This 177-nucleotide RNA was probed chemically with 2A3 and DMS. Values cover nucleotides 27 to 126. The reactions ran in a buffer of 150 mM KOAc, 10 mM MgCl2 and 150 mM bicine (pH 8.5), at 24 C. Source: RMDB library OK2TRN, as collected in RNAgym.

RNA sequence: GGGAACGACUCGAGUAGAGUCGAAAACACCUACGGCUGCGAGAGCCACCACGAUCGCACCCUGGCCAGGCUCAGCGUGAGGCGUGAGUGCCCCGUCCUCUCUUAAUGCAUUACCCACCCUACACCAAAUUAUGACGUGUUUCGACACGUCAUAAUUAAAAGAAACAACAACAACAAC
Reactivity to 2A3 in 0.01 (KOAc 150mM, MgCl2 10mM, bicine 150mM(pH8.5), 24C), signal-to-noise 2, nucleotides 027 to 126: c060a080c000c010u050a050c060g050g010c030u110g020c080g040a120g020a010g150c000c000a010c020c000a030c020g100a150u100c040g040c070a060c010c020c040u020g030g000c040c070a070g040g030c000u020c040a010g020c000g100u070g130a070g010g040c020g020u030g090a090g010u110g040c000c000c000c000g050u050c000c000u000c000u010c000u040u050a110a030u160g030c000a010u010u090a030c010c000c000a030c000c020c000u070a040c050a010c030c050a020
Reactivity to DMS in 0.01 (KOAc 150mM, MgCl2 10mM, bicine 150mM(pH8.5), 24C), signal-to-noise 4, nucleotides 027 to 126: c140a140c020c010u000a090c100g020g010c040u030g020c080g010a140g000a130g020c030c040a080c090c050a070c080g030a100u000c050g010c060a110c070c030c020u000g000g020c040c090a080g010g010c040u030c030a080g020c090g010u000g020a060g010g010c040g020u010g000a090g010u000g000c010c030c020c020g010u010c030c010u000c010u000c030u000u010a060a070u010g010c050a070u000u000a110c030c020c000a140c040c010c000u010a070c130a090c120c120a050